[RMDB]
RNA sequence: GGGAACGACUCGAGUAGAGUCGAAAAGGGCAGCUUGUCUGCUUGCAUGCUCCCAUGGGCUGGCUCCUGCUUGCAGUCCCAGCUUCCGGAAUGAGAGGGAGAGCGCAGCAUCUGGCUCCACACGAUCUGAAGGAUCAGCAUUCGUGCUGAUCCUUCAAAAAGAAACAACAACAACAAC
Reactivity to 2A3 in 0.01 (KOAc 150mM, MgCl2 10mM, bicine 150mM(pH8.5), 24C), signal-to-noise 4, nucleotides 027 to 126: g000g020g010c030a020g000c060u120u170g040u210c010u020g030c000u010u060g000c010a050u210g030c000u020c020c010c010a010u100g000g000g000c000u000g010g000c030u070c060c020u050g030c070u050u140g010c020a010g030u050c000c000c030a010g000c000u120u080c020c010g070g080a180a100u220g030a170g010a150g110g020g000a020g000a010g030c040g000c020a010g000c010a000u030c020u050g060g010c000u000c030c000a020c020a000c090g050a090u040c030
Reactivity to DMS in 0.01 (KOAc 150mM, MgCl2 10mM, bicine 150mM(pH8.5), 24C), signal-to-noise 3, nucleotides 027 to 126: g020g000g000c030a010g000c060u020u020g000u030c020u010g040c000u000u020g030c120a080u010g010c090u010c010c000c000a170u010g010g000g020c000u000g010g000c060u010c210c000u000g000c080u000u010g000c040a090g000u020c300c000c010a040g050c040u010u010c010c000g000g020a150a050u010g000a110g000a170g000g000g000a010g010a060g020c040g010c010a020g010c060a090u020c000u000g010g000c000u000c010c020a090c130a090c090g010a060u000c050